This 177-nucleotide RNA was probed chemically with 2A3 and DMS.
For DMS the reverse transcriptase was MarathonRT.
It was measured as part of the RMDB library M2PK50.

[RMDB]
RNA sequence: GGGAACGACUCGAGUAGAGUCGAAAAGGACCCAGCUUCGGCUGGGUCCAAAGAGAUAGAACCUAUUGAGUUCCUGUGUAGGUACUCAUGACAGGAUGUCAAAAAGUAUGGACUUCGGUCCAUACAACAUUGUUUGUCUGUUCGCAGACAAACAAUGAAAAGAAACAACAACAACAAC
Reactivity to 2A3 in 0.01 (KOAc 150mM, MgCl2 10mM, bicine 150mM(pH8.5), 24C), signal-to-noise 1, nucleotides 027 to 126: g030g000a030c000c020c000a000g000c010u060u060c160g100g000c030u000g000g000g000u000c000c000a020a000a000g000a000g000a000u060a120g120a050a080c020c010u040a110u120u030g000a020g000u040u050c000c010u120g100u120g120u300a010g030g000u020a010c000u000c010a000u020g030a000c030a020g050g020a050u080g100u070c010a040a040a040a000a040g000u010a010u000g010g000a000c000u020u030c160g030g000u000c000c000a010u000a000c000a000a000
Reactivity to DMS in 0.01 (KOAc 150mM, MgCl2 10mM, bicine 150mM(pH8.5), 24C), signal-to-noise 4, nucleotides 027 to 126: g010g020a020c000c000c000a010g020c020u000u020c240g040g020c000u010g010g010g020u000c000c000a000a040a060g010a180g010a070u000a060g000a090a100c010c010u000a120u000u000g000a020g010u000u000c000c000u000g010u010g030u010a010g010g000u000a020c010u000c010a010u000g010a070c200a080g010g010a110u000g010u000c020a090a070a060a110a130g000u000a010u000g000g000a010c000u000u010c190g020g000u000c000c000a000u000a000c000a070a170

For 2A3, 1,665 sequencing reads were counted.